[RMDB]
RNA sequence: GGGAACGACUCGAGUAGAGUCGAAAAUAUUGAAGCUGGGAAUUAGGUUUCCGUGCAGAAGGUGGGCAUGACUCAUAAACCCAGGCUUGCACUGAAGUUGCCUAUCUUCCAUUAGGCCCAAAUUACCUAUGUGUCCAUUGUUCGCAAUGGACACAUAAAAAGAAACAACAACAACAAC
Reactivity to 2A3 in 0.01 (KOAc 150mM, MgCl2 10mM, bicine 150mM(pH8.5), 24C), signal-to-noise 2, nucleotides 027 to 126: u140a020u010u030g030a050a000g030c020u070g020g000g000a010a060u040u010a070g020g060u010u010u060c000c010g010u020g000c010a020g020a260a000g100g020u020g000g000g000c050a070u140g050a170c030u030c250a010u110a110a110a030c040c010c000a000g060g080c050u030u030g030c030a000c000u030g010a020a070g140u250u150g030c000c000u000a040u000c070u010u040c000c000a010u030u160a050g020g020c000c010c000a010a020a000u070u050a050c000c020
Reactivity to DMS in 0.01 (KOAc 150mM, MgCl2 10mM, bicine 150mM(pH8.5), 24C), signal-to-noise 2, nucleotides 027 to 126: u020a040u000u010g010a100a270g000c030u000g000g010g030a030a040u000u000a060g010g010u000u000u030c010c070g010u010g020c040a090g000a060a050g020g050u000g000g000g020c070a290u010g010a100c150u010c150a170u000a070a070a150c050c030c030a080g000g010c050u000u000g000c060a050c080u000g000a020a060g010u010u010g020c000c000u000a050u000c190u000u000c010c020a110u000u010a110g000g000c020c010c000a080a070a060u000u010a140c080c070